[RMDB]
RNA sequence: GGGAACGACUCGAGUAGAGUCGAAAACAAGUAAUCUAGCUAGGGCUAUUUCGUUCAUUAUGCACUUGAUGAUCAAUUUACUUGAUGGCACCCUGAUAUGAGCUAGGAAUGCCCAGCCAGUCAAGUGCUAAUAGUAGUUCUUCGGAACUACUAUUAGAAAAGAAACAACAACAACAAC
Reactivity to DMS in 0.01 (KOAc 150mM, MgCl2 10mM, bicine 150mM(pH8.5), 24C), signal-to-noise 9, nucleotides 027 to 126: c070a060a080g010u010a060a060u010c100u000a050g010c010u000a110g020g010g010c170u000a040u000u000u000c100g010u000u000c040a040u000u000a070u010g010c040a020c030u000u000g010a030u000g000a100u000c090a060a050u000u000u000a040c070u000u000g010a110u000g010g010c070a110c050c020c040u000g010a110u010a070u010g010a050g010c060u000a050g010g000a070a080u010g000c010c000c030a110g000c040c080a100g010u000c030a010a020g020u000g010
Reactivity to 2A3 in 0.01 (KOAc 150mM, MgCl2 10mM, bicine 150mM(pH8.5), 24C), signal-to-noise 9, nucleotides 027 to 126: c020a050a000g090u090a070a110u100c070u080a020g010c010u100a070g040g080g000c040u080a070u090u130u110c070g020u030u020c020a030u040u180a050u220g030c030a020c050u020u030g020a020u030g020a040u130c040a050a090u070u110u130a060c040u020u030g020a040u020g100g000c030a070c040c000c010u010g020a010u040a070u240g050a030g030c040u060a050g050g060a060a020u030g000c000c010c010a000g030c020c010a010g050u030c010a030a020g020u020g040

Chemical mapping of a 177-nucleotide RNA with DMS and 2A3. The DMS profile rests on 43,428 reads.